[RMDB]
RNA sequence: GGGAACGACUCGAGUAGAGUCGAAAAAACAUUGUCAUUGUUGAUCUAGAAUCACAAAACCAAAAAUACUACGACUACUUUUACUAUUAUUGCUUUAAUAACAAUGAGUGUCACAACGACGACGACGACAAUGACAACGAUAAUGAUUAUUACAACAUCGGAUCGUAUACUUCGGUAUACGAUCCGAAAAAGAAACAACAACAACAAC
Reactivity to 2A3 in 0.01 (KOAc 150mM, MgCl2 10mM, bicine 150mM(pH8.5), 24C), signal-to-noise 1, nucleotides 027 to 156: a000a000c050a160u000u000g050u050c000a000u000u000g020u060u030g040a270u000c020u090a110g130a100a170u090c040a050c210a020a080a020a030c100c060a140a070a000a000a000u290a140c040u070a000c070g020a040c020u130a070c000u150u230u100u000a020c040u090a010u290u000a000u000u180g000c070u060u290u030a090a150u050a000a000c020a040a080u160g020a090g040u110g000u020c050a000c020a140a050c180g090a040c020g000a000c070g000a000c020g000a000c020a000a000u020g040a000c000a000a000c020g000a000u000a180a090u050g270a000u020u270a070u090u140a070c070a140a000c000a090